[RMDB]
RNA sequence: GGGAACGACUCGAGUAGAGUCGAAAAGCCGCCGGCACUGACAGCCGGCCGACCAGGGUGGCCUCGCCUAAACUUGCGCCGAGCCCCGCUGGCGUCACCGAGUCCGCCAACCCCGCGGCGGCCGCACCCACCUAGGAAGGUUCGCCUUCCUAGGUGGAAAAGAAACAACAACAACAAC
Reactivity to 2A3 in 0.01 (KOAc 150mM, MgCl2 10mM, bicine 150mM(pH8.5), 24C), signal-to-noise 1, nucleotides 027 to 126: g050c000c050g000c000c000g030g080c040a050c140u180g070a110c070a060g040c000c000g020g040c000c010g000a050c000c000a010g020g090g050u100g060g000c060c030u020c000g000c000c000u090a190a230a300c130u200u140g010c070g040c080c130g010a030g010c040c010c000c010g130c030u000g010g020c010g020u040c000a030c060c000g040a060g060u000c010c000g060c030c010a110a130c040c020c000c000g040c060g000g000c030g000g010c020c020g020c020a040c000
Reactivity to DMS in 0.01 (KOAc 150mM, MgCl2 10mM, bicine 150mM(pH8.5), 24C), signal-to-noise 2, nucleotides 027 to 126: g000c040c080g020c010c020g010g020c020a120c130u000g040a130c150a150g000c020c030g000g010c050c030g020a080c030c000a030g010g000g000u000g010g000c130c020u010c070g000c010c020u000a110a080a160c190u000u000g010c090g040c030c030g010a130g010c030c000c020c000g000c090u010g000g000c030g000u010c150a060c150c020g000a160g020u020c020c010g010c010c030a070a160c000c060c020c080g020c080g010g010c000g010g000c020c040g010c140a150c130